[RMDB]
RNA sequence: GGGAACGACUCGAGUAGAGUCGAAAAAGUCUACUUUUCGAAGUAGACUGUGCUCCCACUUGAUCGAGGUCUCACCGUGUCAUUGCCCACGACACUCGGGGGUAAUAGAUUGGUUCGCCAAUCUAAAGUUCGGAAGAGAAUUCGUUCUCUUCCGAACAAAAGAAACAACAACAACAAC
Reactivity to 2A3 in 0.01 (KOAc 150mM, MgCl2 10mM, bicine 150mM(pH8.5), 24C), signal-to-noise 2, nucleotides 027 to 126: a000g000u030c010u010a000c000u030u040u020u110c190g060a020a000g000u010a000g000a000c000u000g000u070g000c030u020c020c020c010a000c030u050u180g080a100u100c060g050a010g030g080u040c020u020c030a070c060c000g040u040g030u070c020a080u030u160g040c010c000c010a030c010g050a020c010a020c120u050c010g010g010g020g020g000u030a110a050u010a030g010a000u010u010g030g000u010u040c220g020c050c000a010a000u000c010u060a110a050a050
Reactivity to DMS in 0.01 (KOAc 150mM, MgCl2 10mM, bicine 150mM(pH8.5), 24C), signal-to-noise 4, nucleotides 027 to 126: a020g000u000c010u000a010c010u010u000u000u010c140g010a020a010g010u000a000g010a000c000u000g010u010g000c210u000c010c000c010a160c150u020u000g000a080u010c030g020a080g020g010u000c040u000c050a100c060c040g000u000g020u010c030a130u010u000g000c010c020c010a090c150g000a060c090a070c070u000c090g000g010g010g000g020u000a110a130u000a010g000a020u000u000g010g010u000u010c270g020c010c000a010a010u000c010u000a020a060a110
Structure probing data (2A3 and DMS) for a 177-nucleotide construct.
The data come from the RNA Mapping Database (RMDB), library M2PK50.
The DMS profile rests on 3,285 reads.
Conditions: 150 mM KOAc, 10 mM MgCl2 and 150 mM bicine (pH 8.5), 24 C.